[RMDB]
Source: RMDB library RFM100, as collected in RNAgym. An RNA of 177 nucleotides, treated with DMS and 2A3 and read out base by base. For 2A3 the reverse transcriptase was SuperScript II with manganese. Values cover nucleotides 27 to 126. DMS adducts were read by reverse transcription with MarathonRT. Conditions: 150 mM KOAc, 10 mM MgCl2 and 150 mM bicine (pH 8.5), 24 C. For 2A3, 776 sequencing reads were counted.
RNA sequence: GGGAACGACUCGAGUAGAGUCGAAAAACUAGAGGAAACCAACGGCUCAGGCCGGGCGGGUCCCGCGCAGUUUUCCCGCUGAUCCGGCAAUCCUUCGGCGGGGCGACGUGGAUAGCGUGAUAUCUCGCCACAUCGUGUCGUUCGCGACACGAUGUGGAAAAGAAACAACAACAACAAC
Reactivity to DMS in 0.01 (KOAc 150mM, MgCl2 10mM, bicine 150mM(pH8.5), 24C), signal-to-noise 1, nucleotides 027 to 126: a110c030u010a140g000a120g000g070a080a160a160c090c130a050a160c110g000g000c070u000c130a130g000g000c060c000g010g030g000c180g000g020g010u000c130c000c040g000c010g000c090a030g030u000u000u000u000c000c000c020g010c000u050g020a120u000c190c130g000g020c130a130a040u060c000c050u000u000c010g000g000c000g030g070g000g000c070g000a050c050g000u020g010g000a120u000a040g000c020g000u050g000a050u000a110u000c000u050c190g000
Reactivity to 2A3 in 0.01 (KOAc 150mM, MgCl2 10mM, bicine 150mM(pH8.5), 24C), signal-to-noise 2, nucleotides 027 to 126: a000c020u040a010g050a040g070g070a080a080a110c020c050a040a040c020g030g000c020u050c150a160g110g100c000c000g000g010g000c150g000g000g020u040c060c010c030g010c000g000c000a070g000u000u000u090u000c000c000c000g000c000u020g000a030u030c000c000g040g000c000a020a130u230c020c000u030u050c000g060g020c050g030g000g000g000c010g010a010c100g050u110g030g040a070u080a030g010c020g010u010g000a030u110a040u040c070u010c070g000